[RMDB]
RNA sequence: GGGAACGACUCGAGUAGAGUCGAAAAUCUUAGCGUUUCGACGCUAAGAAAACGUGGUGGAGGAGGUGGAAAGGUCGGCAUUAAAGGGAUAAAAACAUCUUCAUAUAGGGUCGUUCGCGACCCUAAAUACAUACCGUUGAUUCGUCAACGGUAUGUAAAAAGAAACAACAACAACAAC
Reactivity to DMS in 0.01 (KOAc 150mM, MgCl2 10mM, bicine 150mM(pH8.5), 24C), signal-to-noise 3, nucleotides 027 to 126: u000c020u000u010a010g010c000g010u000u000u010c180g020a040c010g010c000u000a030a000g000a020a020a060a140c080g010u010g010g020u000g020g000a090g010g020a140g010g020u000g000g000a080a100a070g000g020u020c110g010g000c070a090u010u010a040a050a060g000g020g000a090u000a030a050a070a040a030c140a080u000c040u000u000c120a080u010a160u000a020g000g000g010u000c000g030u000u000c190g000c010g010a010c000c010c000u000a000a020a050
Reactivity to 2A3 in 0.01 (KOAc 150mM, MgCl2 10mM, bicine 150mM(pH8.5), 24C), signal-to-noise 2, nucleotides 027 to 126: u000c000u000u000a010g000c010g050u020u040u090c250g050a000c000g000c000u010a010a010g020a010a000a000a000c060g060u100g020g060u130g030g060a090g000g010a070g000g020u100g010g060a060a070a000g050g020u110c040g020g050c010a000u100u110a140a030a010g070g010g010a020u120a080a170a000a000a010c040a050u030c050u210u090c080a020u130a010u030a200g000g000g010u000c000g020u040u010c140g000c000g060a010c000c000c000u000a010a010a010